[RMDB]
RNA sequence: GGGAACGACUCGAGUAGAGUCGAAAAGGUGAGUACCACGGCUGGCCUGUGUGUAGCUCUCAAUAAGUGUGUGUGCUCAGAGGCAGGGAGCGCACCAUGGCAGAUCCCGGGCCUGUCUGCGGGAGGGUCUGGGAUGAUAAUUCGUUAUCAUCCCAGAAAAAGAAACAACAACAACAAC
Reactivity to 2A3 in 0.01 (KOAc 150mM, MgCl2 10mM, bicine 150mM(pH8.5), 24C), signal-to-noise 8, nucleotides 027 to 126: g090g020u080g040a040g020u030a030c010c010a010c030g020g020c020u090g090g020c030c000u080g010u000g020u030g030u100a070g080c010u000c010u010c020a050a160u220a220a120g020u040g020u030g000u010g010u020g070c010u010c020a050g040a090g230g050c070a040g040g050g050a000g000c000g000c000a000c010c000a040u070g040g000c020a010g010a140u040c010c010c000g000g020g010c000c010u040g020u050c020u040g030c040g020g010g020a070g000g020g020
Reactivity to DMS in 0.01 (KOAc 150mM, MgCl2 10mM, bicine 150mM(pH8.5), 24C), signal-to-noise 5, nucleotides 027 to 126: g010g010u010g000a080g010u000a050c040c020a060c020g010g010c020u020g000g010c070c010u000g010u010g010u040g010u010a070g020c020u000c050u010c070a100a100u020a110a110g010u000g010u040g030u000g010u010g000c010u000c020a100g010a090g000g010c060a060g000g000g000a010g000c000g010c000a020c010c010a010u000g020g010c100a070g010a100u000c010c000c020g010g000g000c020c020u000g000u020c020u010g020c060g010g010g000a080g000g000g000

Source: RMDB library OK1LIB, as collected in RNAgym. This 177-nucleotide RNA was probed chemically with 2A3 and DMS. The reactions ran in a buffer of 150 mM KOAc, 10 mM MgCl2 and 150 mM bicine (pH 8.5), at 24 C. Reactivities are given for positions 27 through 126.